[RMDB]
RNA sequence: GGGAACGACUCGAGUAGAGUCGAAAAUUAGUAGCAAAGCAAUGUAAACAUCUGAGUCCUUUACCUAAAGAAGCUUGUAUCAGUGUUUUUAUCCAUGGUGAUAAAAAGUGUAUAAGAUCUGAAAGCAGAUUGGGUAACACGUAGAGACGAUGCACAGCGCUACACUGUAGUUCGCUACAGUGUAGCGAAAAGAAACAACAACAACAAC
Reactivity to DMS in 0.01 (KOAc 150mM, MgCl2 10mM, bicine 150mM(pH8.5), 24C), signal-to-noise 2, nucleotides 027 to 156: u000u010a130g020u000a080g020c040a120a100a140g020c070a080a060u000g000u000a080a080a120c060a060u000c010u000g000a130g000u000c030c010u020u000u010a000c020c020u000a100a030a260g020a270a210g020c010u000u000g010u010a200u000c040a060g010u000g010u000u000u000u000u010a000u010c000c010a260u000g040g080u000g000a030u010a000a000a030a010a100g040u000g050u000a060u010a080a030g080a150u000c030u000g000a060a060a120g000c010a040g040a300u000u010g010g010g000u030a010a050c110a040c060g040u000a060g010a120g000a050c050g010a120u010g030c000a080c080a110g020
Reactivity to 2A3 in 0.01 (KOAc 150mM, MgCl2 10mM, bicine 150mM(pH8.5), 24C), signal-to-noise 2, nucleotides 027 to 156: u040u030a040g100u070a010g030c020a010a030a060g040c040a050a110u100g030u110a060a090a090c000a040u040c040u060g060a000g060u040c000c000u020u060u000a010c010c000u090a100a050a040g090a060a000g050c010u020u050g060u110a080u090c050a020g030u020g050u060u040u000u020u030a010u010c000c070a060u270g170g000u180g090a000u030a010a030a000a010a040g070u080g000u010a070u030a200a060g030a050u000c000u040g020a080a000a030g000c020a000g040a060u030u040g000g020g000u000a000a010c070a000c090g090u090a030g010a000g000a110c030g000a010u020g010c050a060c020a060g060